[RMDB]
RNA sequence: GGGAACGACUCGAGUAGAGUCGAAAAAGCCAGUCAUAUUGAAGACUUAUCUUUUGGUUAUAAUAAUGGCUAUGGUUAUAUCAAGUUAAGAGAUAUUAUCGUUGAACGAAUGUCAAAGCAAGGUAUAGGGACACCCUUUAUUCGUAAAGGGUGUCCCAAAAGAAACAACAACAACAAC
Reactivity to 2A3 in 0.01 (KOAc 150mM, MgCl2 10mM, bicine 150mM(pH8.5), 24C), signal-to-noise 1, nucleotides 027 to 126: a000g180c000c000a000g000u030c000a000u000a090u040u050g200a300a170g000a020c000u000u150a140u220c090u190u020u100u030g040g000u000u090a000u000a010a090u200a210a150u000g000g000c000u090a000u150g000g000u080u170a040u000a000u070c000a000a090g110u110u170a020a000g000a000g000a250u000a000u070u070a020u000c090g010u000u060g130a130a000c000g110a150a050u150g000u080c000a000a080a000g100c040a090a090g080g100u000a110u300a040
About this RNA:
The data come from the RNA Mapping Database (RMDB), library OK1LIB. Chemical mapping of a 177-nucleotide RNA with 2A3. Values cover nucleotides 27 to 126.